Conditions: 150 mM KOAc, 10 mM MgCl2 and 150 mM bicine (pH 8.5), 24 C. The record gives the reactivity of an RNA of 177 nucleotides to DMS and 2A3. High 2A3 reactivity points to a flexible backbone, as in loops and unpaired stretches. 2A3 adducts were read by reverse transcription with SuperScript II with manganese. Source: RMDB library M2PK90, as collected in RNAgym. Reactivities are rounded to 0.1 and cut off at 0 and 3.

[RMDB]
RNA sequence: GGGAACGACUCGAGUAGAGUCGAAAAACUUUUACCGAUUAUCGUUAUAGAAAUGUCCUUGGCAUAUCGCUAUGCACAGAGGUAUUAGUAGCGCAAUAGCUAUUGAAGGACAUUACCUCUCAAAUAAUACUUUAUAUACUUUCGAGUAUAUAAAGUAAAAAGAAACAACAACAACAAC
Reactivity to DMS in 0.01 (KOAc 150mM, MgCl2 10mM, bicine 150mM(pH8.5), 24C), signal-to-noise 2, nucleotides 027 to 126: a030c010u000u000u010u010a040c010c010g000a070u000u020a130u010c000g020u000u010a160u010a110g010a090a040a020u000g000u010c000c010u000u000g020g010c070a060u010a040u000c100g000c090u000a020u000g000c110a060c140a140g010a070g000g000u000a040u010u010a090g010u010a010g020c010g010c170a050a070u010a080g000c000u000a060u000u000g010a020a030g000g000a040c010a010u000u000a080c050c020u010c100u000c030a040a060a090u000a090a140
Reactivity to 2A3 in 0.01 (KOAc 150mM, MgCl2 10mM, bicine 150mM(pH8.5), 24C), signal-to-noise 2, nucleotides 027 to 126: a030c020u040u110u140u080a070c030c040g000a020u070u090a060u180c000g000u010u070a150u050a200g090a050a060a000u000g020u000c000c000u000u050g030g010c040a020u040a020u300c010g000c050u040a020u040g010c020a030c090a170g220a110g160g080u090a150u060u110a050g010u000a010g000c020g000c030a030a090u030a010g000c000u010a030u050u140g100a030a020g010g000a000c010a010u010u000a000c010c020u040c000u000c060a090a140a070u200a090a040
The DMS profile rests on 2,107 reads. DMS adducts were read by reverse transcription with MarathonRT.